The data come from the RNA Mapping Database (RMDB), library OK2TRN. The record gives the reactivity of an RNA of 177 nucleotides to 2A3 and DMS. 2A3 adducts were read by reverse transcription with SuperScript II with manganese. The reactions ran in a buffer of 150 mM KOAc, 10 mM MgCl2 and 150 mM bicine (pH 8.5), at 24 C. The 2A3 profile rests on 4,567 reads.
RNA sequence: GGGAACGACUCGAGUAGAGUCGAAAACAGGCAUGAUCAUUAUGCUGAUUCCAACAGUGAUGGCGUUCCAUUUAACCACACGUAACGGAGAACCACACAUGAUCGUCAGCAGACAAGAGAAAGGGAAGGUUAGGAAUGGAUUCGUCCAUUCCUAACCAAAAGAAACAACAACAACAAC
Reactivity to 2A3 in 0.01 (KOAc 150mM, MgCl2 10mM, bicine 150mM(pH8.5), 24C), signal-to-noise 4, nucleotides 027 to 126: c020a000g080g050c020a030u050g050a100u120c030a060u090u230a020u130g000c040u040g010a040u070u050c040c010a060a020c040a070g030u030g100a300u020g050g000c060g090u120u080c040c000a040u140u060u150a050a050c030c020a050c000a020c120g030u030a080a010c040g010g030a050g020a070a030c000c000a010c010a010c000a110u070g020a050u050c020g020u030c020a010g030c010a010g060a080c020a070a030g040a010g070a130a040a020g040g050g040a040a070
Reactivity to DMS in 0.01 (KOAc 150mM, MgCl2 10mM, bicine 150mM(pH8.5), 24C), signal-to-noise 4, nucleotides 027 to 126: c140a130g000g020c060a060u010g000a120u010c080a050u000u000a130u000g020c050u000g000a160u010u020c020c040a110a110c140a100g000u000g010a100u000g010g040c270g010u010u020c060c030a110u000u010u000a090a080c080c090a050c080a030c100g000u000a070a100c210g000g000a090g000a040a030c070c000a050c040a040c040a060u010g000a070u000c090g000u000c020a050g010c060a030g000a060c180a080a070g010a060g000a080a070a060g020g000g010a130a090